Chemical mapping of a 207-nucleotide RNA with 2A3 and DMS. DMS adducts were read by reverse transcription with MarathonRT. Values cover nucleotides 27 to 156. The RNA was probed in 150 mM KOAc, 10 mM MgCl2 and 150 mM bicine (pH 8.5) at 24 C. For DMS, 3,955 sequencing reads were counted.
RNA sequence: GGGAACGACUCGAGUAGAGUCGAAAAGCAAGACAGAAACACUGAACUUUCUUAUCAACUUUUGCUAGAUACUAUCAGUGAUCGACAUCAGUAUUUUUCAAUGUGGAAUCAGGCUGUAGACAGUUAUGACCCUGAUGUGCGAAUCAUUGAUAACAGGGGAGCAAAGUAUAUUCGUAUACUUUGCUCCAAAAGAAACAACAACAACAAC
Reactivity to 2A3 in 0.01 (KOAc 150mM, MgCl2 10mM, bicine 150mM(pH8.5), 24C), signal-to-noise 6, nucleotides 027 to 156: g020c020a000a030g040a050c020a030g060a070a140a020c090a050c120u130g050a140a080c020u060u060u040c040u060u140a130u180c040a100a180c060u080u090u100u170g030c010u040a040g010a130u110a140c040u020a020u020c000a000g000u000g000a010u000c000g010a000c000a000u000c010a010g050u070a190u090u170u080u130u130c140a160a090u180g070u070g090g030a050a110u050c010a020g020g000c000u020g030u120a080g160a270c020a020g000u040u050a150u160g000a020c010c000c000u000g000a000u010g020u070g110c010g000a040a020u000c000a000u000u010g000a000u000a000a050c030a020g100g060
Reactivity to DMS in 0.01 (KOAc 150mM, MgCl2 10mM, bicine 150mM(pH8.5), 24C), signal-to-noise 2, nucleotides 027 to 156: g010c040a090a120g010a210c140a050g030a040a020a010c020a110c050u000g000a150a140c050u000u000u000c020u000u000a110u000c030a080a070c030u000u000u000u010g020c010u000a090g010a180u010a060c070u000a190u010c030a000g050u010g010a050u000c030g030a070c000a000u010c020a050g000u010a090u000u020u010u010u030c110a110a150u010g060u020g000g000a050a150u010c060a070g020g000c010u010g030u000a140g010a150c010a080g000u000u000a060u000g020a060c050c020c000u010g000a040u000g030u010g000c050g030a050a060u010c010a000u000u020g010a050u000a020a060c070a120g000g010